RNA sequence: GGGAACGACUCGAGUAGAGUCGAAAAUAAUGAUGGUUCACUUCCCAUCUGAGAUGUCUAAAAUUUGGAUUUACUUGGUAUAGAUUGUGGAAAACCACAUCGGGAAAUGAGGAUGAAUCCCAAAGCGAUUACUGCCCCACAGAUGUUUGGUCGGCUAGUAUAGUGACGAGUUCGCUCGUCACUAUACAAAAGAAACAACAACAACAAC
Reactivity to DMS in 0.01 (KOAc 150mM, MgCl2 10mM, bicine 150mM(pH8.5), 24C), signal-to-noise 2, nucleotides 027 to 156: u000a100a040u010g020a110u000g030g000u000u000c060a070c040u000u000c030c020c000a230u000c020u000g000a040g020a080u010g000u000c020u000a040a030a110a170u000u000u000g010g000a120u010u000u000a070c020u000u000g020g010u000a130u000a190g000a120u010u000g050u000g020g040a110a070a100a180c010c020a050c000a030u010c020g040g000g020a020a040a080u020g000a050g010g040a130u000g000a100a110u000c020c010c020a030a070a160g020c040g000a090u010u000a120c100u000g010c030c000c000c010a040c060a060g000a110u020g000u000u000u020g020g020u000c030g020g000c020u000a160
Reactivity to 2A3 in 0.01 (KOAc 150mM, MgCl2 10mM, bicine 150mM(pH8.5), 24C), signal-to-noise 3, nucleotides 027 to 156: u170a030a040u100g110a060u100g070g060u070u070c020a010c040u040u010c010c020c010a020u000c020u020g050a050g020a080u030g000u030c070u070a060a110a300a300u130u130u150g010g020a050u000u040u060a250c040u020u040g000g020u110a080u090a120g090a070u140u200g020u060g000g010a110a160a110a050c000c000a000c000a010u070c040g050g000g000a040a110a090u090g010a040g080g010a030u080g040a040a080u030c010c010c000a060a110a030g050c030g040a000u010u160a070c040u090g010c010c000c000c010a050c050a040g220a100u130g050u140u120u090g060g040u050c090g020g000c000u020a020